[RMDB]
RNA sequence: GGGAACGACUCGAGUAGAGUCGAAAACAGAGCUAAUGAGCCACAUACCUACCCAAGGUGAAAGCUCCUUCUCUCGCAAUGUGUAACUCAUGAUUCGCAUGACCCCUGGUUGGAGAGAUCCGGACUAUAGACUAGAGGGUGUUCGCACCCUCUAGAACUGACUUGAGUAGUUCGCUACUCAAGUCAGAAAAGAAACAACAACAACAAC
Reactivity to DMS in 0.01 (KOAc 150mM, MgCl2 10mM, bicine 150mM(pH8.5), 24C), signal-to-noise 1, nucleotides 027 to 156: c040a140g000a080g010c090u020a090a050u000g010a100g030c020c050a050c010a250u000a020c030c030u000a100c050c040c010a050a050g000g020u010g010a200a120a110g000c010u000c010c000u000u010c020u000c050u000c020g030c080a130a060u010g050u000g020u010a040a030c000u000c050a050u010g010a210u000u000c100g090c010a030u030g040a290c000c010c020c020u010g010g050u000u010g000g010a090g010a120g000a080u000c010c070g000g000a160c080u000a050u000a070g020a210c000u000a010g020a030g010g000g050u000g020u010u020c280g000c000a010c010c010c000u010c000u000a000g000a030a150
Reactivity to 2A3 in 0.01 (KOAc 150mM, MgCl2 10mM, bicine 150mM(pH8.5), 24C), signal-to-noise 1, nucleotides 027 to 156: c060a010g020a000g060c030u170a140a030u180g030a030g120c080c000a050c030a070u270a040c020c000u070a060c010c020c000a060a020g010g020u030g020a130a020a000g030c040u020c000c010u110u100c050u010c000u030c070g090c170a070a110u020g020u020g050u140a110a060c030u060c100a020u020g100a170u170u230c120g030c110a010u050g080a100c010c000c010c090u080g040g000u020u070g010g000a030g000a000g010a040u040c060c030g000g000a000c040u040a040u090a290g170a120c000u020a000g000a010g000g000g010u000g010u000u000c120g040c010a000c000c000c000u000c000u000a010g000a000a000